[RMDB]
The record gives the reactivity of an RNA of 177 nucleotides to 2A3 and DMS.
For DMS, 9,154 sequencing reads were counted.
As a SHAPE reagent, 2A3 marks flexible, mostly unpaired nucleotides at the ribose 2'-OH.
RNA sequence: GGGAACGACUCGAGUAGAGUCGAAAAGAUAUGGACUAUUCGGGAGACUACCUGUCGGAAACGACAGGGUGUAGAAUAAGUCUUUGAUCGAGAUAGUCCUAAGUCAAAAGCUUGCUUCGGCAAGCAACAAUCUUCAAUUCUUCGGAAUUGAAGAUUGAAAAGAAACAACAACAACAAC
Reactivity to 2A3 in 0.01 (KOAc 150mM, MgCl2 10mM, bicine 150mM(pH8.5), 24C), signal-to-noise 3, nucleotides 027 to 126: g000a000u020a010u050g000g000a000c010u010a010u020u010c010g010g040g000a020g010a000c010u070a110c020c000u000g000u010c010g010g000a010a000a000c010g010a000c010a010g000g030g000u040g030u050a090g120a190a150u270a300a020g000u020c000u130u100u010g010a010u000c010g000a010g030a270u010a000g010u000c010c000u000a000a010g010u000c010a000a020a120a140g000c000u010u010g000c010u050u100c230g130g000c000a000a000g000c000a000a000
Reactivity to DMS in 0.01 (KOAc 150mM, MgCl2 10mM, bicine 150mM(pH8.5), 24C), signal-to-noise 5, nucleotides 027 to 126: g000a020u000a010u020g000g010a010c000u000a010u000u000c000g010g010g010a020g010a040c010u000a110c010c000u000g010u000c000g010g000a010a010a020c000g010a020c010a010g010g020g010u010g020u000a110g020a090a150u010a130a100g010u000c000u000u010u010g010a010u010c000g000a070g010a030u000a010g000u000c000c000u000a000a080g010u000c010a110a090a120a130g010c000u000u000g010c000u000u010c210g020g000c000a000a000g010c010a080a070